[RMDB]
RNA sequence: GGGAACGACUCGAGUAGAGUCGAAAACGGCGAGCUUCGGCUCGCCGAAAACGGUACCGGUUCCCGUUGGUGCGCAAACUCCGCGCCCAUCGACCCGGCGACCAAAACCAUGACCUUCGGGUCAUGGCAUAUCCAACCUGUUCGCAGGUUGGAUAUGAAAAGAAACAACAACAACAAC
Reactivity to DMS in 0.01 (KOAc 150mM, MgCl2 10mM, bicine 150mM(pH8.5), 24C), signal-to-noise 1, nucleotides 027 to 126: c050g040g040c020g030a010g050c030u000u010c180g030g050c000u020c000g040c000c030g000a000a030a070a080c240g010g010u020a090c000c000g000g000u010u000c220c180c030g000u010u000g000g030u030g010c010g010c020a050a110a150c300u010c200c130g000c000g030c000c000c000a010u000c000g000a060c170c000c000g000g020c060g000a020c010c000a020a050a090a180c020c000a000u000g000a010c000c000u000u000c230g020g020g010u000c000a000u000g000g020
Reactivity to 2A3 in 0.01 (KOAc 150mM, MgCl2 10mM, bicine 150mM(pH8.5), 24C), signal-to-noise 1, nucleotides 027 to 126: c040g010g040c000g010a010g060c050u100u300c300g130g020c080u020c010g000c030c020g010a000a000a000a000c030g000g000u020a020c000c020g000g010u090u060c090c050c000g010u010u010g000g020u260g020c010g010c020a030a040a300c130u070c130c080g000c000g000c000c000c000a000u000c000g020a050c000c000c000g050g020c130g040a030c000c000a040a040a020a000c010c000a020u000g010a000c000c010u000u040c240g100g010g000u000c000a010u000g000g040
This 177-nucleotide RNA was probed chemically with DMS and 2A3. It was measured as part of the RMDB library RFMREP. 2A3 adducts were read by reverse transcription with SuperScript II with manganese. The reactions ran in a buffer of 150 mM KOAc, 10 mM MgCl2 and 150 mM bicine (pH 8.5), at 24 C.